[RMDB]
RNA sequence: GGGAACGACUCGAGUAGAGUCGAAAACCGUGACAUUGCGAAAGCAAGGCUGGCGGUAGGUAGUCCUGGGCGGCGACAGCCUUGGACUGCGGCGUAAAGGUGCACCUGGGGCCGUUAAACCUAUCGUGAAAGGCAACUUGGUUCGCCAAGUUGCCAACCAUAAGAUCUACUUCGGUAGAUCUUAUGGAAAAGAAACAACAACAACAAC
Reactivity to DMS in 0.01 (KOAc 150mM, MgCl2 10mM, bicine 150mM(pH8.5), 24C), signal-to-noise 2, nucleotides 027 to 156: c000c000g020u040g000a080c060a090u000u000g010c000g000a190a140a260g020c020a020a030g040g040c060u000g030g030c000g000g010u000a020g030g020u000a030g010u010c000c000u000g010g000g010c000g020g020c070g020a160c180a230g010c000c010u020u000g010g000a040c020u000g010c010g010g020c000g030u000a090a130a050g020g020u010g000c110a090c020c000u020g000g000g020g010c020c020g000u000u020a040a110a120c020c010u000a030u000c020g000u000g010a040a100a050g010g020c000a010a010c010u000u020g010g010u000u000c300g030c000c010a010a040g000u000u000g020c000c000a000a020
Reactivity to 2A3 in 0.01 (KOAc 150mM, MgCl2 10mM, bicine 150mM(pH8.5), 24C), signal-to-noise 5, nucleotides 027 to 156: c000c000g050u080g040a080c140a190u040u040g010c010g060a130a030a030g010c020a020a040g060g040c080u070g070g000c000g000g000u000a000g010g000u020a000g000u000c000c010u020g010g000g000c020g040g040c150g100a080c120a030g010c000c000u000u010g000g000a000c000u010g000c000g000g000c000g020u070a050a050a020g080g010u170g090c090a160c170c000u020g010g000g120g000c000c000g000u020u120a090a150a060c010c000u000a010u010c010g000u020g040a110a080a030g000g000c000a000a000c000u000u010g010g000u030u050c090g030c060c010a010a010g000u010u010g000c000c000a000a000
Structure probing data (DMS and 2A3) for a 207-nucleotide construct. The reactions ran in a buffer of 150 mM KOAc, 10 mM MgCl2 and 150 mM bicine (pH 8.5), at 24 C. Reactivities are rounded to 0.1 and cut off at 0 and 3.